The record gives the reactivity of an RNA of 207 nucleotides to DMS and 2A3. It was measured as part of the RMDB library OK3TST. DMS adducts were read by reverse transcription with MarathonRT. For 2A3, 1,534 sequencing reads were counted. The reactions ran in a buffer of 150 mM KOAc, 10 mM MgCl2 and 150 mM bicine (pH 8.5), at 24 C.
RNA sequence: GGGAACGACUCGAGUAGAGUCGAAAAUCCCAAAGGUUGCCGAAUCCGAAAGGUAAGGAGGAACCGCUUUUUGGGGUUAAUCUGCAGUGAAGCUGCAGUAGGGAUACCUUCUGUCCCGCACCCGACAGCUAACUCCGUAGGCAAUAAAGGAAGGAGACCGAUUAGUGAUAUUCGUAUCACUAAUCGGAAAAGAAACAACAACAACAAC
Reactivity to DMS in 0.01 (KOAc 150mM, MgCl2 10mM, bicine 150mM(pH8.5), 24C), signal-to-noise 3, nucleotides 027 to 156: u000c000c000c000a080a080a100g020g010u000u000g030c010c040g010a200a300u000c020c000g000a150a120a110g020g010u000a060a090g020g000a110g030g010a160a150c100c040g020c100u000u010u000u010u000g040g000g030g000u010u010a080a060u010c010u010g010c030a010g030u010g010a170a180g030c020u010g000c000a030g020u000a100g020g010g020a040u000a070c030c090u000u000c030u000g010u010c120c000c010g010c090a060c020c000c030g000a080c110a060g000c030u000a090a290c050u000c000c000g040u000a230g000g010c030a070a080u000a080a130a110g020g000a070a050g010g050a300g000a220
Reactivity to 2A3 in 0.01 (KOAc 150mM, MgCl2 10mM, bicine 150mM(pH8.5), 24C), signal-to-noise 1, nucleotides 027 to 156: u000c000c000c000a040a080a020g100g010u030u010g020c010c000g030a040a060u120c000c000g090a170a050a030g010g010u030a050a020g000g000a000g000g000a080a090c110c020g010c060u130u080u040u040u150g020g000g000g000u020u010a040a020u060c000u000g000c000a010g010u070g200a280a020g130c000u000g000c000a000g010u000a000g020g000g000a010u080a100c000c000u010u010c010u030g000u000c000c000c000g010c020a050c010c000c010g030a090c070a030g000c000u030a030a060c000u010c000c000g060u110a060g010g000c000a010a000u010a020a020a000g040g000a020a010g030g000a030g030a030